[RMDB]
An RNA of 177 nucleotides, treated with DMS and 2A3 and read out base by base.
For DMS the reverse transcriptase was MarathonRT.
Values cover nucleotides 27 to 126.
The reactions ran in a buffer of 150 mM KOAc, 10 mM MgCl2 and 150 mM bicine (pH 8.5), at 24 C.

RNA sequence: GGGAACGACUCGAGUAGAGUCGAAAAAUCGACGGUCGCUGGUGCGAGGUUAAGGUGCCCAACUCGAAGGGCAUGGGCCACCAGGUGCCUUGCAAGGUGUUCGUGGGCCGCUGCACCGAGGACAUUAGACUGAGGUGGAGUUCGCUCCACCUCAGUCAAAAGAAACAACAACAACAAC
Reactivity to DMS in 0.01 (KOAc 150mM, MgCl2 10mM, bicine 150mM(pH8.5), 24C), signal-to-noise 1, nucleotides 027 to 126: a100u010c070g030a080c120g010g030u000c040g010c120u040g030g010u010g040c040g010a080g000g020u000u000a100a090g040g040u000g010c010c010c000a080a090c120u030c110g020a130a140g020g000g020c040a050u000g000g020g010c050c030a040c070c050a120g010g020u010g000c000c030u000u000g010c100a170a140g000g000u010g000u000u010c250g020u000g000g010g020c040c010g000c090u010g020c000a030c040c010g000a080g010g000a060c090a110u010u000a080
Reactivity to 2A3 in 0.01 (KOAc 150mM, MgCl2 10mM, bicine 150mM(pH8.5), 24C), signal-to-noise 1, nucleotides 027 to 126: a000u080c010g040a020c030g120g010u040c070g000c190u110g110g060u060g040c030g190a060g000g050u140u230a070a000g080g000u020g000c030c000c000a050a100c060u090c070g180a170a160g060g000g000c140a080u010g000g010g000c080c010a000c030c000a040g010g060u100g000c000c020u000u010g070c020a070a040g000g000u020g020u100u140c040g100u090g000g030g000c010c010g010c010u040g000c000a020c010c020g060a070g000g010a010c030a040u010u050a050